[RMDB]
RNA sequence: GGGAACGACUCGAGUAGAGUCGAAAAAGGAAGAUGCGGAGGCGUUGCUCGCUGUGCGACUCGAUCUGAGAGAAGAAGAGGCAGCUGGAAGCGCGUCUGGCCCGCCGACUCUCCAUCGGCAGUCUCCAAAUUACUGCCUAUUCGUAGGCAGUAAUUUAAAAGAAACAACAACAACAAC
Reactivity to 2A3 in 0.01 (KOAc 150mM, MgCl2 10mM, bicine 150mM(pH8.5), 24C), signal-to-noise 9, nucleotides 027 to 126: a000g240g030a080a060g070a100u140g030c020g010g030a010g020g000c020g030u080u300g010c010u010c020g000c010u020g030u080g140c050g100a090c020u010c020g140a280u040c050u150g070a070g030a010g040a300a020g040a040a020g020a050g040g000c010a000g000c020u110g070g070a100a030g020c010g000c010g040u000c010u010g050g070c000c000c020g000c010c000g020a020c000u010c000u000c040c020a300u030c010g020g040c130a010g010u000c010u000c010c000
Reactivity to DMS in 0.01 (KOAc 150mM, MgCl2 10mM, bicine 150mM(pH8.5), 24C), signal-to-noise 9, nucleotides 027 to 126: a100g010g000a140a060g010a100u030g010c020g010g010a120g000g010c020g010u000u010g010c020u000c160g000c010u000g020u010g000c040g000a250c030u010c000g000a130u020c080u020g010a170g000a170g000a090a120g010a080a110g000a300g010g000c020a030g000c000u010g000g010a050a060g000c010g000c000g000u000c010u000g010g020c060c070c040g000c060c010g000a040c040u010c030u010c060c060a160u010c020g000g010c090a110g000u000c010u010c010c070
The record gives the reactivity of an RNA of 177 nucleotides to 2A3 and DMS. Source: RMDB library OK1LIB, as collected in RNAgym. For DMS the reverse transcriptase was MarathonRT.